[RMDB]
RNA sequence: GGGAACGACUCGAGUAGAGUCGAAAAGAUAAAUCUGAUAGAGCCCAUUUUGGCAGACUUUAUAGGAUAUCAUAGCUAUACCUAUAUGGUAGAUUUUAUGCGCGAGUUUUCCAUCCAUCCGGAAAAAAUGAUCAAAAUGGCUGCGCGAGAAUCGAGGAUACUACGACUAUUUCGAUAGUCGUAGUAUAAAAGAAACAACAACAACAAC
Reactivity to DMS in 0.01 (KOAc 150mM, MgCl2 10mM, bicine 150mM(pH8.5), 24C), signal-to-noise 3, nucleotides 027 to 156: g010a180u010a050a110a100u000c010u000g010a110u010a040g000a090g010c010c010c030a210u000u010u000u000g050g030c100a120g000a080c030u000u010u000a020u000a150g030g020a150u010a050u000c030a110u000a150g020c090u000a110u000a050c010c010u010a100u000a070u000g010g010u000a050g000a100u000u000u000u000a050u020g020c010g020c030g010a150g030u000u000u000u000c020c010a110u000c080c120a090u000c110c080g050g020a000a040a080a050a070a090u000g010a100u000c030a040a030a090a090u010g010g030c020u010g000c010g040c030g020a100g010a050a100u000c030g000a180g000g000
Reactivity to 2A3 in 0.01 (KOAc 150mM, MgCl2 10mM, bicine 150mM(pH8.5), 24C), signal-to-noise 2, nucleotides 027 to 156: g020a020u140a050a150a100u040c100u130g040a040u070a160g110a110g050c040c010c010a070u090u110u040u060g060g000c050a020g020a060c030u000u040u030a020u040a020g000g040a050u030a030u070c080a100u110a120g040c030u040a010u080a110c010c000u000a010u020a020u040g020g030u050a060g010a100u030u020u040u100a120u240g030c040g000c020g000a020g100u050u060u000u090c010c010a040u010c050c010a100u030c090c050g050g090a040a000a000a010a000a050u130g010a060u100c060a030a050a000a050u040g020g010c040u030g000c070g000c000g010a020g020a030a020u100c060g060a030g040g030